[RMDB]
Structure probing data (2A3 and DMS) for a 177-nucleotide construct.
The 2A3 profile rests on 2,116 reads.
RNA sequence: GGGAACGACUCGAGUAGAGUCGAAAAGAUAUGGACCUAUACUACCCACCUCCACGUCGGAAACGACAAGGAGAGGUAUGAGGUCCUAAGUCAAAGAUUUUUCAAAGGUUCGCCUUUGAAAAAUCAAGUAAAGAGCAGAGUUCGCUCUGCUCUUUACAAAAGAAACAACAACAACAAC
Reactivity to 2A3 in 0.01 (KOAc 150mM, MgCl2 10mM, bicine 150mM(pH8.5), 24C), signal-to-noise 1, nucleotides 027 to 126: g070a030u100a180u170g000g000a000c000c000u080a060u080a170c090u110a080c010c000c050a110c050c000u060c010c010a030c070g010u000c020g020g000a070a090a130c030g000a000c020a060a090g000g000a020g000a000g000g000u020a000u050g190a030g020g010u000c000c000u000a030a000g030u040c080a050a120a150g000a020u030u020u010u000u010c010a000a030a020g020g000u020u170c290g200c020c000u040u010u000g010a010a000a000a000a000u010c000a000a010
Reactivity to DMS in 0.01 (KOAc 150mM, MgCl2 10mM, bicine 150mM(pH8.5), 24C), signal-to-noise 3, nucleotides 027 to 126: g010a060u020a300u000g010g000a030c000c000u000a050u000a300c070u000a030c000c000c040a300c160c000u000c000c010a070c300g000u000c010g030g010a080a060a130c000g010a010c000a180a300g000g000a020g000a030g010g000u000a000u000g010a040g000g000u000c000c000u000a020a100g000u020c070a050a090a080g000a020u000u000u000u000u000c000a010a030a000g000g000u000u000c240g010c010c000u000u000u000g000a000a000a000a000a000u030c020a080a050